RNA sequence: GGGAACGACUCGAGUAGAGUCGAAAAAAUGCAUCUACGGAUGCAGAACUACGUUCAUCCAAUUUAUUUGGACGCAUGAAAUGAGAAUAGGGAACGGGAUUCUCAUACGCAGGCUACGGCCUGCGAAAAAACUCCUUAUGCUUCGGCAUAAGGAGAACAUAUUUUCGCAGUUCGCUGCGAAAAUAUGAAAAGAAACAACAACAACAAC
Reactivity to DMS in 0.01 (KOAc 150mM, MgCl2 10mM, bicine 150mM(pH8.5), 24C), signal-to-noise 1, nucleotides 027 to 156: a090a040u000g030c000a010u000c010u000a180c250g060g000a050u000g000c000a030g000a080a150c000u000a000c000g000u000u010c000a170u000c080c160a110a080u000u000u000a110u020u000u000g010g010a000c060g030c040a140u010g000a030a270a080u000g000a080g000a170a110u000a160g000g000g010a040a060c050g000g040g000a300u000u000c010u000c000a040u000a050c000g000c010a050g000g010c000u000a080c200g070g000c030c000u000g000c010g000a000a020a080a050a020a040c000u000c000c000u000u000a010u000g000c010u000u030c280g030g020c010a040u010a000a000g030g000a000g000a000a030
Reactivity to 2A3 in 0.01 (KOAc 150mM, MgCl2 10mM, bicine 150mM(pH8.5), 24C), signal-to-noise 2, nucleotides 027 to 156: a000a000u000g000c000a000u000c000u010a020c230g100g000a000u000g000c000a000g000a060a030c120u160a030c010g000u000u000c000a000u030c000c000a040a030u170u210u140a130u130u100u130g010g020a000c010g030c040a060u100g080a180a090a040u010g000a020g020a010a000u010a040g080g000g000a030a000c010g000g000g000a010u000u030c000u000c000a000u010a040c020g000c000a000g010g010c000u030a090c290g100g000c000c000u020g040c000g020a010a000a000a010a000a010c000u000c000c010u000u000a000u000g000c000u050u030c190g000g000c010a000u010a000a000g000g000a000g000a000a000